[RMDB]
RNA sequence: GGGAACGACUCGAGUAGAGUCGAAAAGUGUCUGUACUCAUACGCUUGAAAUCGAGUGUAGUAUAGGCAAAGCGUCCAGUAAGUUGGAGUGUGCUGUUCCAAUACAGCCUAAACUGGACAUUACGGCACAUCCUUCGAUAUUCGUAUCGAAGGAUGUAAAAGAAACAACAACAACAAC
Reactivity to 2A3 in 0.01 (KOAc 150mM, MgCl2 10mM, bicine 150mM(pH8.5), 24C), signal-to-noise 7, nucleotides 027 to 126: g070u030g010u000c000u000g020u000a010c010u050c090a110u040a140c020g030c010u010u050g100a160a150a150u300c100g000a010g010u020g000u030a010g000u000a000u000a010g020g000c000a000a070a010g110c090g010u000c000c000a000g010u070a100a140g030u080u160g060g040a130g040u110g050u120g010c000u000g000u020u040c080c000a030a010u220a090c020a000g000c000c010u080a160a110a020c000u000g000g000a000c000a010u050u160a070c050g040g000c070
Reactivity to DMS in 0.01 (KOAc 150mM, MgCl2 10mM, bicine 150mM(pH8.5), 24C), signal-to-noise 7, nucleotides 027 to 126: g000u000g000u000c010u000g030u000a000c010u030c210a180u020a110c010g010c050u010u020g020a120a150a130u040c040g000a220g020u010g010u020a020g000u000a000u000a000g000g000c010a020a080a090g010c190g010u000c000c010a010g000u010a070a110g010u020u000g000g020a150g010u010g000u040g020c010u000g000u000u010c130c170a100a080u040a070c060a050g000c000c010u010a020a090a040c000u000g000g010a010c020a140u030u030a060c110g010g000c190